[RMDB]
Chemical mapping of a 177-nucleotide RNA with 2A3 and DMS. The reactions ran in a buffer of 150 mM KOAc, 10 mM MgCl2 and 150 mM bicine (pH 8.5), at 24 C. 2A3 adducts were read by reverse transcription with SuperScript II with manganese. DMS adducts were read by reverse transcription with MarathonRT. Reactivities are rounded to 0.1 and cut off at 0 and 3.

RNA sequence: GGGAACGACUCGAGUAGAGUCGAAAAAGGGCUGGAUUCGUCCAGCCCUGCACAUUCGUACGGAACGAAGCGUACGUCAUUACGCAAAUGACGUAAAGCGUAGAACCACGGACUUCGGUCCGUGGAAUGAGUAAUUUCUUUUCGAAGAAAUUACUCAAAAAGAAACAACAACAACAAC
Reactivity to 2A3 in 0.01 (KOAc 150mM, MgCl2 10mM, bicine 150mM(pH8.5), 24C), signal-to-noise 6, nucleotides 027 to 126: a000g010g000g010c000u000g010g020a020u030u050c140g040u000c050c000a000g010c000c000c000u010g000c000a010c010a100u090u110c040g060u090a070c080g060g120a180a020c020g010a110a030g030c020g030u030a010c000g000u010c000a010u000u100a070c090g010c230a090a030a020u030g020a000c000g000u040a110a040a050g010c010g020u060a030g030a090a050c010c000a000c000g010g000a010c000u040u070c230g100g010u000c010c000g010u000g000g010a000a030
Reactivity to DMS in 0.01 (KOAc 150mM, MgCl2 10mM, bicine 150mM(pH8.5), 24C), signal-to-noise 9, nucleotides 027 to 126: a010g010g010g010c000u000g010g010a030u000u010c170g020u000c000c000a010g000c000c000c000u000g000c110a100c160a180u000u000c030g020u010a120c150g010g010a100a060c050g000a050a140g010c030g010u000a000c000g000u010c020a010u000u000a070c300g010c270a090a030a010u000g000a020c010g000u010a020a040a130g000c020g000u010a090g010a130a210c010c000a010c010g000g000a020c000u000u010c150g030g000u000c000c000g020u000g000g010a010a030